Conditions: 150 mM KOAc, 10 mM MgCl2 and 150 mM bicine (pH 8.5), 24 C. Chemical mapping of a 177-nucleotide RNA with DMS and 2A3. It was measured as part of the RMDB library VIROID. The 2A3 profile rests on 7,175 reads.
RNA sequence: GGGAACGACUCGAGUAGAGUCGAAAACGAAGCGAGGAGGAAAGCAAAGAAAGCAACGGGGCUAGUCGGUGGGUGUUCCGCCUUCCGAGAGGGGACGAGUGAGGCUUAUCCCGGGGAACUCGGCGAACAAUUACUCAUAGUUCGCUAUGAGUAAUUGAAAAGAAACAACAACAACAAC
Reactivity to DMS in 0.01 (KOAc 150mM, MgCl2 10mM, bicine 150mM(pH8.5), 24C), signal-to-noise 6, nucleotides 027 to 126: c120g010a120a100g020c070g000a070g010g010a070g000g000a070a080a080g010c070a050a090a100g010a080a100a100g000c030a080a080c110g000g000g000g010c060u000a060g010u000c040g000g010u000g000g000g020u000g010u000u010c080c040g010c010c010u000u010c020c010g000a060g010a100g000g010g000g010a070c070g000a040g000u000g000a080g010g000c060u000u000a090u010c020c010c000g000g000g000g010a100a070c060u000c040g010g010c130g000a050a120
Reactivity to 2A3 in 0.01 (KOAc 150mM, MgCl2 10mM, bicine 150mM(pH8.5), 24C), signal-to-noise 4, nucleotides 027 to 126: c030g040a060a000g060c030g030a020g040g030a020g020g050a110a030a000g020c050a110a060a100g100a060a100a010g050c030a040a030c050g000g010g020g030c020u030a030g110u040c030g010g020u030g020g010g010u050g070u210u050c060c050g030c000c010u050u010c020c010g040a050g020a020g010g020g000g000a010c020g000a000g030u080g040a030g040g010c000u040u060a060u060c020c000c000g000g000g000g010a030a020c020u000c060g050g000c020g020a030a010